This 177-nucleotide RNA was probed chemically with DMS and 2A3. For DMS the reverse transcriptase was MarathonRT. Source: RMDB library M2PK90, as collected in RNAgym.

RNA sequence: GGGAACGACUCGAGUAGAGUCGAAAAAAAUUAUGGUCGCCGGCACGUAUGUGCACACCGUGAAUGACACUCUUUCGCCGUCAACCGUGUCGGUAGUCUUGCACAUCAGGAAUCCGUCUGCGUUGAAAACACUACCACAGUUCGCUGUGGUAGUGUUAAAAGAAACAACAACAACAAC
Reactivity to DMS in 0.01 (KOAc 150mM, MgCl2 10mM, bicine 150mM(pH8.5), 24C), signal-to-noise 3, nucleotides 027 to 126: a020a020a060u010u000a040u010g010g010u000c040g020c050c030g020g000c040a020c030g020u010a060u010g010u000g010c070a110c140a070c060c100g000u020g010a090a050u010g020a090c120a090c120u000c060u010u000u000c060g010c040c040g010u000c050a050a060c170c020g010u000g010u000c010g020g000u010a040g020u010c030u000u000g010c100a050c090a060u000c040a070g010g010a060a070u000c030c010g020u010c010u000g020c070g000u000u000g000a080a070
Reactivity to 2A3 in 0.01 (KOAc 150mM, MgCl2 10mM, bicine 150mM(pH8.5), 24C), signal-to-noise 2, nucleotides 027 to 126: a000a000a020u180u060a120u070g000g000u000c040g010c010c000g010g000c020a020c020g050u140a070u300g050u040g010c010a000c000a000c040c000g020u030g080a070a050u150g010a040c040a040c180u050c030u080u090u080c060g000c030c020g010u050c020a040a030c060c000g010u010g000u020c000g000g030u030a060g020u010c050u030u040g010c050a020c000a130u070c010a030g100g020a050a090u010c000c030g010u000c060u040g040c030g060u080u020g000a050a090